[RMDB]
RNA sequence: GGGAACGACUCGAGUAGAGUCGAAAACGUCGACGAGACGGUCGAGUAUCCGGUGCAGGUGAACGGCAAGGUACGUGGCCGGGUGGUGGUGGCCGCCGACACCGACGAGGAAACGCUGAAAGCCGCCUCUGGUAAGAGACUUCGGUCUCUUACCAGAAAAAGAAACAACAACAACAAC
Reactivity to DMS in 0.01 (KOAc 150mM, MgCl2 10mM, bicine 150mM(pH8.5), 24C), signal-to-noise 3, nucleotides 027 to 126: c090g000u020c000g010a060c060g020a220g020a070c080g000g000u000c040g000a140g000u000a050u030c020c020g000g000u010g030c080a040g000g000u020g000a160a190c010g020g000c030a130a100g000g040u030a050c060g000u010g010g010c010c000g000g000g020u010g020g000u000g000g010u000g000g010c010c030g000c030c030g000a090c180a040c010c010g000a120c080g000a120g000g020a060a090a100c130g000c050u030g000a070a100a110g030c030c010g000c080c020
Reactivity to 2A3 in 0.01 (KOAc 150mM, MgCl2 10mM, bicine 150mM(pH8.5), 24C), signal-to-noise 4, nucleotides 027 to 126: c050g070u040c030g000a070c020g050a040g030a120c020g000g030u020c020g000a040g020u060a070u060c020c000g070g020u070g100c060a050g040g040u050g100a150a050c040g050g010c110a090a060g070g020u120a080c050g100u050g030g000c020c000g040g000g020u060g010g040u070g020g040u070g020g010c020c000g020c010c000g010a010c000a010c030c000g040a060c040g010a010g040g070a040a140a030c080g020c060u060g030a080a060a020g030c020c030g010c010c020
Structure probing data (DMS and 2A3) for a 177-nucleotide construct. The data come from the RNA Mapping Database (RMDB), library OK1LIB. For 2A3, 2,706 sequencing reads were counted. For DMS, 5,466 sequencing reads were counted. For DMS the reverse transcriptase was MarathonRT. Conditions: 150 mM KOAc, 10 mM MgCl2 and 150 mM bicine (pH 8.5), 24 C. High DMS reactivity at an A or C suggests that its Watson-Crick edge is free.